[RMDB]
Source: RMDB library OK3TST, as collected in RNAgym. An RNA of 207 nucleotides, treated with 2A3 and read out base by base. The 2A3 profile rests on 378 reads. The reactions ran in a buffer of 150 mM KOAc, 10 mM MgCl2 and 150 mM bicine (pH 8.5), at 24 C. 2A3 adducts were read by reverse transcription with SuperScript II with manganese.
RNA sequence: GGGAACGACUCGAGUAGAGUCGAAAAUUAAACUCACUCCGGGGGCUCGUCGCCCCGGAUACCGUACAGCGCGUUUAACGCGGCUGCAGCGACGCGCACGUACCUGGCGAGCCACGCCCGUGGCCCCGGGAUCUUCGCUCUGCACAUUUUACGCGGCCACGGCUCUACUAUUCGUAGUAGAGCCGUGAAAAGAAACAACAACAACAAC
Reactivity to 2A3 in 0.01 (KOAc 150mM, MgCl2 10mM, bicine 150mM(pH8.5), 24C), signal-to-noise 1, nucleotides 027 to 156: u030u010a150a150a100c080u040c050a080c120u000c040c000g000g000g000g130g020c030u060c180g140u180c030g090c000c040c000c020g000g000a020u030a000c040c030g060u030a110c000a150g000c000g000c050g010u050u160u170a100a020c040g040c010g050g000c050u000g020c010a000g010c010g000a020c030g000c000g000c040a000c140g000u000a060c000c000u020g010g010c090g080a020g070c010c000a010c010g120c000c070c160g020u010g000g000c000c000c000c000g030g000g030a030u010c130u200u040c020g010c000u040c050u130g110c010a090c070a180u030u110u080u160a060c060g130c000g050g000c030